[RMDB]
RNA sequence: GGGAACGACUCGAGUAGAGUCGAAAACGUGUCCGUCGGCGUAGCCGACAACAUGCCCAGGUAGCCCAGACCUUCAAGGCUACGGUGCGUUGCGACGCACGGUCUGAUUCUUAACAACGACGUUCACAAGAUCGGAUCACUUUCGAGUGAUCCGAAAGUUUAGUACGAACUUCGGUUCGUACUAAACAAAAGAAACAACAACAACAAC
Reactivity to DMS in 0.01 (KOAc 150mM, MgCl2 10mM, bicine 150mM(pH8.5), 24C), signal-to-noise 1, nucleotides 027 to 156: c030g100u000g000u000c060c050g020u030c010g010g010c010g050u030a140g010c000c010g040a030c020a030a010c080a020u000g000c030c010c070a100g060g000u000a050g000c010c030c280a060g000a160c050c080u010u010c120a100a300g010g000c000u010a060c030g010g070u000g030c000g000u010u010g000c180g050a190c050g020c040a050c000g000g000u000c030u020g000a260u000u050c040u030u030a170a170c050a080a150c010g020a070c030g010u000u010c000a100c040a070a170g000a070u020c000g000g000a010u000c000a000c000u000u000u010c280g000a070g050u010g000a040u010c000c030g010a000a000a010
Reactivity to 2A3 in 0.01 (KOAc 150mM, MgCl2 10mM, bicine 150mM(pH8.5), 24C), signal-to-noise 3, nucleotides 027 to 156: c050g010u010g020u070c120c120g000u020c000g000g020c290g150u180a060g010c000c000g010a000c000a010a000c000a000u090g050c000c000c000a010g010g010u010a000g000c010c030c120a020g000a000c000c000u000u000c020a010a010g000g010c010u000a000c000g000g000u010g000c010g000u020u070g110c240g080a020c000g010c000a000c010g000g000u010c010u000g010a050u170u000c060u150u130a080a050c090a060a060c080g080a030c080g110u120u140c060a030c050a170a030g040a210u020c000g000g000a000u000c000a000c010u050u080u080c140g120a020g000u000g000a000u000c000c000g000a000a000a000